[RMDB]
RNA sequence: GGGAACGACUCGAGUAGAGUCGAAAAGACCAAACAUUGGAUUGAUUAACUCAUUAUCAAGUUAUGCACGUGUAAAUGAAUUCGGCUUUAUUGAAACACCAUAUCGUAAAGUUGAUUUAGAUACACACCCUCAUCAUCGAUUCGUCGAUGAUGAGGGAAAAGAAACAACAACAACAAC
Reactivity to 2A3 in 0.01 (KOAc 150mM, MgCl2 10mM, bicine 150mM(pH8.5), 24C), signal-to-noise 5, nucleotides 027 to 126: g030a020c000c010a020a070a000c100a120u070u190g050g020a010u040u110g070a040u060u160a090a050c080u050c050a020u050u150a090u170c030a050a010g090u040u090a080u200g140c090a010c150g000u030g000u010a010a060a030u020g000a000a010u140u080c020g000g000c000u080u000u030a100u060u300g040a090a070a060c040a060c040c040a040u090a050u210c000g000u000a010a000a000g000u000u000g000a010u010u000u000a050g000a030u050a010c000a000c000a010
Reactivity to DMS in 0.01 (KOAc 150mM, MgCl2 10mM, bicine 150mM(pH8.5), 24C), signal-to-noise 1, nucleotides 027 to 126: g040a120c000c000a100a130a150c110a000u060u000g000g000a000u000u020g000a140u000u020a150a080c030u000c030a110u090u000a250u010c190a020a020g000u000u000a050u040g120c050a070c260g020u000g000u000a000a050a210u000g000a060a130u090u040c000g030g040c000u000u000u000a000u000u130g020a020a080a080c030a090c150c300a040u100a050u000c000g050u030a000a000a000g020u000u000g000a020u000u000u010a050g030a230u020a000c000a000c080a260

Structure probing data (2A3 and DMS) for a 177-nucleotide construct. For DMS the reverse transcriptase was MarathonRT.